[RMDB]
RNA sequence: GGGAACGACUCGAGUAGAGUCGAAAAGAUAUGGAGGGUGAUGACCGGGACAGCGAAGAACUCGGAAACGAGGGAGCUGUUUCCGCAAGCCCUCCUAAGUCAAAACACCUAGCUUCGGCUAGGUGAAGACAUAUUAACUCUUCGGAGUUAAUAUGUCAAAAGAAACAACAACAACAAC
Reactivity to DMS in 0.01 (KOAc 150mM, MgCl2 10mM, bicine 150mM(pH8.5), 24C), signal-to-noise 7, nucleotides 027 to 126: g010a050u010a300u010g000g000a030g000g000g030u010g010a150u000g010a140c300c020g000g000g000a010c010a010g010c000g020a090a120g000a090a220c010u000c000g000g000a130a090a130c000g010a010g000g000g000a060g000c000u000g000u000u000u010c000c000g000c050a110a300g000c010c000c000u000c000c000u000a000a070g000u010c030a100a080a100a240c010a010c000c000u000a010g010c000u000u010c210g030g000c000u010a010g000g000u000g000a020a050
Reactivity to 2A3 in 0.01 (KOAc 150mM, MgCl2 10mM, bicine 150mM(pH8.5), 24C), signal-to-noise 5, nucleotides 027 to 126: g020a010u060a030u140g010g010a010g010g040g050u050g060a270u190g040a060c080c050g000g000g010a000c000a000g030c010g200a300a020g030a080a050c010u000c010g020g030a070a050a030c010g000a010g000g010g000a010g000c000u000g070u020u010u030c000c000g000c000a040a050g000c000c000c000u000c000c000u010a000a000g000u010c000a000a000a050a090c000a000c000c000u000a000g010c000u050u060c300g120g000c000u010a000g040g000u000g000a000a000